An RNA of 177 nucleotides, treated with DMS and 2A3 and read out base by base. Source: RMDB library OK1LIB, as collected in RNAgym. The reactions ran in a buffer of 150 mM KOAc, 10 mM MgCl2 and 150 mM bicine (pH 8.5), at 24 C. For DMS, 12,787 sequencing reads were counted. 2A3 is a SHAPE reagent: it acylates the 2'-hydroxyl of flexible nucleotides of all four kinds. Reactivities are given for positions 27 through 126.

RNA sequence: GGGAACGACUCGAGUAGAGUCGAAAACAACUGGUGCAGGCGUUGCUGUUCGAUGUGCCCAAUGUGCUCAGGCAUGUGCUGACACUGCUACUAGGUGUCGCGGUCAUGACCUGGUUGUCGGUGCCGCUAGUACAAGGGAAUUCGUUCCCUUGUACUAAAAAGAAACAACAACAACAAC
Reactivity to DMS in 0.01 (KOAc 150mM, MgCl2 10mM, bicine 150mM(pH8.5), 24C), signal-to-noise 3, nucleotides 027 to 126: c080a090a140c100u010g000g020u020g000c010a020g000g010c080g030u020u020g030c020u000g000u000u010c070g000a050u000g030u010g000c040c010c030a080a060u010g020u010g000c040u010c000a030g000g000c010a030u000g010u050g010c010u030g000a030c000a010c000u000g010c180u020a120c200u050a140g000g040u000g020u000c030g000c000g010g000u010c010a050u010g000a070c000c020u010g000g000u010u010g010u010c030g000g000u000g000c020c020g000c140
Reactivity to 2A3 in 0.01 (KOAc 150mM, MgCl2 10mM, bicine 150mM(pH8.5), 24C), signal-to-noise 6, nucleotides 027 to 126: c070a010a020c060u090g010g030u090g030c060a070g090g020c050g130u110u080g020c050u040g070u070u070c050g030a110u070g050u090g070c020c010c000a040a110u160g030u090g030c030u020c090a020g010g020c000a010u060g050u070g060c040u070g010a000c010a000c010u060g070c050u120a140c050u100a110g020g010u020g000u000c020g010c030g020g010u160c030a050u100g110a300c000c010u020g030g030u050u080g040u030c020g030g000u080g010c020c020g010c040